Structure probing data (DMS and 2A3) for a 177-nucleotide construct. Values are in units of 0.01, from 0 to 300, in steps of 10. 2A3 adducts were read by reverse transcription with SuperScript II with manganese. The 2A3 profile rests on 1,995 reads. 2A3 is a SHAPE reagent: it acylates the 2'-hydroxyl of flexible nucleotides of all four kinds.
[RMDB]
RNA sequence: GGGAACGACUCGAGUAGAGUCGAAAACAGCGGCGACAACAUGAACCCUGUCUUCAUAUACUUGGUGCCGAAGCCCUGCCCCCGCGUGCGUAUCGUGCUCCCCGGUUUGUGCGCUCGGCCGGUACGCGCCACUACUCCUAUUCGUAGGAGUAGUGGCAAAAGAAACAACAACAACAAC
Reactivity to DMS in 0.01 (KOAc 150mM, MgCl2 10mM, bicine 150mM(pH8.5), 24C), signal-to-noise 3, nucleotides 027 to 126: c140a110g010c030g030g000c020g010a110c090a040a080c200a050u000g000a070a070c050c070c060u000g010u000c090u000u000c060a060u020a080u000a100c150u000u000g010g000u010g010c040c030g000a100a140g000c030c020c030u010g000c020c000c000c020c030g020c120g030u000g020c000g000u000a020u000c010g010u010g010c040u000c050c000c070c040g000g010u010u000u010g000u010g000c010g000c050u000c050g010g010c010c020g000g010u000a010c040g010c060
Reactivity to 2A3 in 0.01 (KOAc 150mM, MgCl2 10mM, bicine 150mM(pH8.5), 24C), signal-to-noise 2, nucleotides 027 to 126: c040a000g080c030g020g000c020g030a060c060a120a040c040a070u070g070a040a030c020c030c130u080g040u090c040u080u030c050a050u170a020u060a230c020u030u080g000g000u050g020c000c030g040a030a030g060c010c030c020u050g040c020c010c000c030c020g080c010g020u070g010c040g020u010a010u030c020g070u160g030c000u080c000c020c010c020g020g080u080u130u140g100u060g000c010g000c040u020c040g030g010c000c020g020g000u010a000c010g000c020